[RMDB]
RNA sequence: GGGAACGACUCGAGUAGAGUCGAAAAGAUAUGGAAUACUCUCGGGCUCCAACAGCUCGGAAACGAGACAUGGAGUCCGAGAGGUAUUCCUAAGUCAAACACGAACUCCGUUCGCGGAGUUCGUGAAGUUAGCUAAAUUCUUCGGAAUUUAGCUAACAAAAGAAACAACAACAACAAC
Reactivity to DMS in 0.01 (KOAc 150mM, MgCl2 10mM, bicine 150mM(pH8.5), 24C), signal-to-noise 3, nucleotides 027 to 126: g000a050u010a300u020g000g000a030a000u000a020c000u000c000u000c000g010g010g000c000u000c010c000a020a080c260a210g020c010u000c000g000g000a070a090a170c000g000a010g000a060c050a210u010g010g000a000g030u000c000c000g000a010g000a000g020g010u010a000u000u000c000c010u000a040a080g000u000c030a090a080a300c010a010c000g000a010a020c010u010c000c000g020u000u000c240g020c030g010g000a030g010u000u000c000g000u010g000a020a070
Reactivity to 2A3 in 0.01 (KOAc 150mM, MgCl2 10mM, bicine 150mM(pH8.5), 24C), signal-to-noise 1, nucleotides 027 to 126: g020a000u080a040u150g000g010a020a000u010a020c010u020c000u000c000g000g000g000c010u010c020c000a090a050c070a170g020c000u000c010g020g000a060a070a010c020g010a000g040a040c070a100u090g000g000a000g020u000c000c010g000a020g010a010g000g020u000a010u010u000c000c000u000a040a010g010u000c040a080a010a060c010a010c000g010a000a020c010u010c000c000g030u100u080c260g000c030g130g010a000g010u000u000c000g010u000g000a000a030
Record summary: Source: RMDB library TTRDEL, as collected in RNAgym. An RNA of 177 nucleotides, treated with DMS and 2A3 and read out base by base. Conditions: 150 mM KOAc, 10 mM MgCl2 and 150 mM bicine (pH 8.5), 24 C.